RNA sequence: GGGAACGACUCGAGUAGAGUCGAAAAGUAAAAGAAAAAUUUGAAGCAGUCAUGGGAGAAAAAGCGAACGGAUUCGUUUCAAGUGUCCUAUCAGUCGUAACUAAUAACAAUAUUUUGUCAAAAGCAGAUUUUAACAGUGUCUAUACCUCAGCCAUGACCGUUAUUCACUAUUCGUAGUGAAUAACGGAAAAGAAACAACAACAACAAC
Reactivity to 2A3 in 0.01 (KOAc 150mM, MgCl2 10mM, bicine 150mM(pH8.5), 24C), signal-to-noise 3, nucleotides 027 to 156: g010u090a020a010a050a090g110a080a100a060a010a020u150u210u130g010a060a010g030c000a010g030u040c010a020u050g060g000g000a040g030a030a070a060a020a000g100c060g040a040a020c020g080g040a060u070u120c030g050u040u030u110c110a130a060g010u030g020u100c010c000u020a070u130c050a020g040u020c000g000u030a030a000c030u020a060a120u070a080a010c010a090a000u100a130u160u150u100u050g040u070c010a010a110a010a030g020c040a010g030a100u090u070u090u170a070a030c040a020g010u010g000u070c010u010a060u030a070c000c020u020c020a020g020c010c010a030u080g100a010
Reactivity to DMS in 0.01 (KOAc 150mM, MgCl2 10mM, bicine 150mM(pH8.5), 24C), signal-to-noise 1, nucleotides 027 to 156: g000u020a040a040a040a200g010a040a100a040a120a080u010u000u030g010a100a070g000c040a080g030u000c030a060u010g020g000g000a100g020a080a060a030a070a070g020c030g000a070a180c070g000g010a120u010u000c070g000u000u010u000c000a100a070g060u000g020u000c000c050u030a090u010c060a030g000u010c060g010u000a080a120c060u000a020a050u010a070a050c040a020a070u010a070u000u000u000u000g010u000c000a020a070a130a180g020c030a130g030a140u010u010u010u010a050a070c100a050g010u010g030u000c020u000a080u000a060c020c020u000c010a100g010c070c060a050u000g010a150